[RMDB]
RNA sequence: GGGAACGACUCGAGUAGAGUCGAAAAGAUAUGGAUGGAGUCGUGUACUUUCCCUAGAUCGGAAACGAUCUAGCAAGUACUCGACGUUGAAAUCCUAAGUCAAAACCAGAACGUUCGCGUUCUGGAACGAUAUGCUCAUCUUCGGAUGAGCAUAUCGAAAAGAAACAACAACAACAAC
Reactivity to 2A3 in 0.01 (KOAc 150mM, MgCl2 10mM, bicine 150mM(pH8.5), 24C), signal-to-noise 2, nucleotides 027 to 126: g030a010u110a030u130g000g020a020u010g030g040a030g010u010c020g020u000g000u040a000c000u030u080u090c040c030c000u000a010g000a000u010c000g030g000a040a040a060c010g000a000u000c000u000a000g020c020a010a000g010u000a000c000u020c020g000a000c020g010u010u000g000a020a010a010u000c000c000u030a170a000g050u040c050a020a000a060a180c020c000a010g010a010a010c000g030u040u100c300g020c000g140u000u000c040u010g000g010a000a020
Reactivity to DMS in 0.01 (KOAc 150mM, MgCl2 10mM, bicine 150mM(pH8.5), 24C), signal-to-noise 2, nucleotides 027 to 126: g010a100u000a300u000g010g000a000u000g000g000a060g010u000c000g020u010g000u000a000c000u000u000u000c140c240c010u020a000g000a010u000c000g000g000a130a100a210c000g010a000u000c000u000a010g060c140a010a020g010u010a000c000u000c000g000a010c000g000u000u010g000a130a110a030u000c000c010u010a090a140g010u000c020a080a130a140a120c000c000a030g000a000a000c000g020u000u010c230g020c000g000u000u000c010u020g000g000a020a040